Structure probing data (2A3 and DMS) for a 177-nucleotide construct. High 2A3 reactivity points to a flexible backbone, as in loops and unpaired stretches. Conditions: 150 mM KOAc, 10 mM MgCl2 and 150 mM bicine (pH 8.5), 24 C.
[RMDB]
RNA sequence: GGGAACGACUCGAGUAGAGUCGAAAACCCACUGACGGUUGGUGAGCGGAUAAGGUCCUGAACAGAUGCCCUCCGGGCGUCCACGGCUGACGGUUGAUUCCUCCUCCUGACUGAGUGCACAAGGCCCUCCCAAUGGUUAUUUCGAUAACCAUUGGGAAAAAGAAACAACAACAACAAC
Reactivity to 2A3 in 0.01 (KOAc 150mM, MgCl2 10mM, bicine 150mM(pH8.5), 24C), signal-to-noise 6, nucleotides 027 to 126: c000c000c000a010c020u060g060a030c010g040g030u050u040g030g030u090g020a030g020c060g020g010a040u040a110a070g070g010u030c000c020u050g030a060a020c020a040g020a040u050g010c020c000c000u130c080c080g000g010g010c000g010u000c010c020a060c050g030g020c020u030g030a020c030g040g030u030u050g060a120u070u040c000c000u010c000c000u010c000c000u020g010a040c010u040g020a020g040u040g020c020a030c010a090a040g050g010c010c000c000
Reactivity to DMS in 0.01 (KOAc 150mM, MgCl2 10mM, bicine 150mM(pH8.5), 24C), signal-to-noise 5, nucleotides 027 to 126: c000c010c010a090c170u020g010a080c040g010g000u000u020g000g020u010g000a110g020c300g000g000a050u000a070a120g000g000u000c020c050u010g010a120a080c170a100g000a080u000g000c020c010c010u030c140c150g000g000g010c040g020u000c020c070a100c120g000g000c030u000g000a110c100g010g020u010u010g000a150u000u000c020c010u000c050c020u000c010c010u010g020a130c100u000g000a080g020u020g000c040a060c090a060a100g000g010c010c020c050